[RMDB]
RNA sequence: GGGAACGACUCGAGUAGAGUCGAAAAGCGGGUGUGGUAGCUCACGCCAGUAAUCCCAGCACUUUGGGAAGCCAAGCCGGGCGAAUCACGAGGUCAGGAGUUCAAGACCAUCUUGGCCAACAUGGUGGUAUUUAGGUAGUUUCGACUACCUAAAUACAAAAGAAACAACAACAACAAC
Reactivity to 2A3 in 0.01 (KOAc 150mM, MgCl2 10mM, bicine 150mM(pH8.5), 24C), signal-to-noise 8, nucleotides 027 to 126: g040c040g010g010g010u030g000u020g010g060u070a040g030c060u070c070a010c010g010c010c000a000g020u040a020a080u030c010c000c010a010g070c020a010c020u080u080u030g030g000g020a040a020g010c010c010a030a010g010c040c030g050g020g000c050g050a040a030u110c050a040c140g050a050g030g100u060c050a030g040g060a080g050u120u130c100a120a030g060a060c010c000a040u020c000u010u020g000g000c000c010a020a030c020a040u070g050g010u050g070
Reactivity to DMS in 0.01 (KOAc 150mM, MgCl2 10mM, bicine 150mM(pH8.5), 24C), signal-to-noise 9, nucleotides 027 to 126: g010c030g010g010g020u000g030u000g010g010u010a150g010c200u010c020a020c030g010c010c010a060g020u000a080a120u010c000c000c000a160g010c090a040c060u000u000u000g010g000g000a100a160g010c020c030a040a060g000c200c060g000g000g010c060g010a070a040u000c060a080c070g010a200g010g010u000c050a040g000g000a100g010u000u000c100a070a110g000a060c060c040a080u000c010u000u000g010g010c010c020a110a150c160a050u000g000g010u000g010

Background: Structure probing data (2A3 and DMS) for a 177-nucleotide construct. For DMS, 26,468 sequencing reads were counted. 2A3 adducts were read by reverse transcription with SuperScript II with manganese. Conditions: 150 mM KOAc, 10 mM MgCl2 and 150 mM bicine (pH 8.5), 24 C. For 2A3, 29,231 sequencing reads were counted.